[RMDB]
RNA sequence: GGGAACGACUCGAGUAGAGUCGAAAAGAAGGGAAGAUGACAUGCAUCAAAUACAUGAAACAAAUGGUUUAGAAAGGAAAGAGCUAUCCUUUGUACUUGGUGUUGGUAGCAUGGAAGGGUAGACAAGCACUCAACUAGACUUCGGUCUAGUUGAGUGAAAAGAAACAACAACAACAAC
Reactivity to 2A3 in 0.01 (KOAc 150mM, MgCl2 10mM, bicine 150mM(pH8.5), 24C), signal-to-noise 3, nucleotides 027 to 126: g090a020a020g060g000g000a060a010g060a090u070g020a030c020a040u010g000c000a010u020c040a020a050a020u110a020c030a030u120g140a200a060a020c030a020a050a060u170g030g000u050u100u070a050g050a040a110a020g090g070a110a080a000g060a020g000c010u010a010u010c000c000u030u000u020g030u050a080c020u000u080g080g000u070g040u040u060g020g010u020a040g000c040a010u040g040g020a020a030g010g010g040u040a040g000a050c010a050a010g020
Reactivity to DMS in 0.01 (KOAc 150mM, MgCl2 10mM, bicine 150mM(pH8.5), 24C), signal-to-noise 3, nucleotides 027 to 126: g010a110a110g000g020g000a040a080g010a130u010g010a190c070a040u000g000c020a070u000c060a030a050a070u010a050c020a050u000g020a110a080a050c050a050a040a040u010g010g000u020u000u000a070g000a030a030a250g010g010a040a080a080g000a100g010c040u000a020u000c010c010u000u000u000g020u010a080c070u010u000g000g020u000g000u000u010g000g010u000a050g020c030a050u000g000g000a090a070g000g000g000u010a040g010a050c190a060a090g010